[RMDB]
RNA sequence: GGGAACGACUCGAGUAGAGUCGAAAAGAGCCGACAGAGAAGUCGGGAAGCGACGAGAGAGAAUAGAAUACAUUGGAAUUCGAGAUACUGCCACAAAAUGACAGACGUCGCCAUAUUCUCUGAGAAGGAGCGGUAUACUGUUCGCAGUAUACCGCUCAAAAGAAACAACAACAACAAC
Reactivity to DMS in 0.01 (KOAc 150mM, MgCl2 10mM, bicine 150mM(pH8.5), 24C), signal-to-noise 2, nucleotides 027 to 126: g010a080g010c000c000g000a000c000a090g000a170g000a080a080g020u020c090g000g000g010a210a140g010c000g000a000c040g000a230g000a080g000a140g020a050a020u000a080g000a020a060u020a060c020a290u040u060g000g040a020a050u000u000c000g000a140g000a080u000a030c000u020g000c030c000a000c140a170a000a090a180u000g050a050c000a010g000a290c050g020u000c000g010c020c060a160u020a070u000u000c020u000c040u000g000a100g020a080a140g000
Reactivity to 2A3 in 0.01 (KOAc 150mM, MgCl2 10mM, bicine 150mM(pH8.5), 24C), signal-to-noise 2, nucleotides 027 to 126: g040a010g190c000c000g000a000c010a010g300a070g070a300a000g030u060c040g000g000g000a060a000g030c000g000a000c010g010a010g000a000g000a000g000a140a000u050a030g020a070a050u210a140c100a070u090u220g080g040a030a020u010u020c040g000a000g020a090u070a190c000u000g050c010c040a070c050a110a020a030a050u190g120a010c000a000g020a000c030g000u050c010g000c000c000a060u080a010u110u000c000u000c030u040g080a070g070a220a000g140